RNA sequence: GGGAACGACUCGAGUAGAGUCGAAAAGACGCCUGUGUGGCGAAGCGAGCAAUGGCAUAAGCCGCAAUAGAAGAUGAGAUGGAAGCGGCAAGAUAGAAUGCUCGCAAAGAGAUCCAUCUCACAGAGAGAUUUACGACGGAUUCGUCCGUCGUAAAUCAAAAGAAACAACAACAACAAC
Reactivity to DMS in 0.01 (KOAc 150mM, MgCl2 10mM, bicine 150mM(pH8.5), 24C), signal-to-noise 2, nucleotides 027 to 126: g000a240c000g060c010c010u040g040u000g000u010g000g050c020g020a200a080g000c000g000a020g020c060a040a110u010g030g000c100a060u000a080a130g010c000c000g050c030a220a130u110a090g000a080a090g000a160u030g000a000g000a000u000g010g020a050a110g050c010g000g000c020a010a020g020a150u000a040g000a060a080u000g000c020u020c000g010c000a030a050a030g020a190g020a110u000c010c020a000u000c000u010c000a040c130a110g000a060g000a280
Reactivity to 2A3 in 0.01 (KOAc 150mM, MgCl2 10mM, bicine 150mM(pH8.5), 24C), signal-to-noise 4, nucleotides 027 to 126: g060a050c000g010c040c040u250g070u130g160u220g120g000c020g000a040a010g020c000g000a000g000c030a030a110u300g200g000c000a070u040a040a070g000c000c010g010c030a030a060u140a100g120a110a030g130a150u060g000a030g000a010u020g000g020a140a040g000c000g010g000c000a020a010g050a030u100a010g120a140a090u000g000c000u020c010g000c010a010a030a000g070a000g000a000u010c000c000a000u010c000u010c030a010c010a000g180a010g020a000
Structure probing data (DMS and 2A3) for a 177-nucleotide construct. The RNA was probed in 150 mM KOAc, 10 mM MgCl2 and 150 mM bicine (pH 8.5) at 24 C. The data come from the RNA Mapping Database (RMDB), library OK1LIB.